RNA sequence: GGGAACGACUCGAGUAGAGUCGAAAAUCGGAGAUUAACGCUGACAGCACGUUCGACGAGGCGCGCAUGAAGAUGCUCACCGGCGGCGACAAGCUCACCGGCCGGUUCAUGCGGCAGGACCAUUUCGAUUUCCGGCCGUCGCAUCUGUUGAUGCUCGCACAUGUCAUGCAUUCGUGCAUGACAUGUGAAAAGAAACAACAACAACAAC
Reactivity to 2A3 in 0.01 (KOAc 150mM, MgCl2 10mM, bicine 150mM(pH8.5), 24C), signal-to-noise 1, nucleotides 027 to 156: u050c010g040g040a050g000a060u160u130a170a060c070g010c000u050g070a040c050a110g020c070a030c090g060u140u090c000g030a030c000g020a070g020g070c030g020c000g020c060a010u060g000a040a030g050a010u030g000c030u020c140a000c010c000g000g000c000g010g030c000g000a000c070a210a050g060c060u030c020a060c000c010g230g000c010c000g000g000u010u110c050a050u130g010c000g000g000c000a030g000g050a050c030c030a030u120u110u180c110g010a100u030u050u080c010c000g030g000c000c000g010u000c040g000c000a010u000c010u010g070u080u120g070a040u050g000c000u010c060g020
Reactivity to DMS in 0.01 (KOAc 150mM, MgCl2 10mM, bicine 150mM(pH8.5), 24C), signal-to-noise 1, nucleotides 027 to 156: u000c070g010g000a050g090a140u000u030a040a080c070g010c010u190g030a140c080a180g000c040a120c030g010u000u000c090g020a180c110g030a110g010g020c070g050c090g030c020a060u000g010a080a000g010a060u000g010c000u040c110a110c000c000g030g000c020g030g000c000g040a010c050a110a150g020c150u000c030a060c040c030g030g020c000c000g010g020u000u000c030a080u010g020c000g040g010c020a070g030g000a120c040c030a180u010u000u000c100g000a090u000u000u010c000c020g020g000c000c000g060u000c120g040c020a020u000c070u000g000u000u000g060a120u000g000c020u000c040g010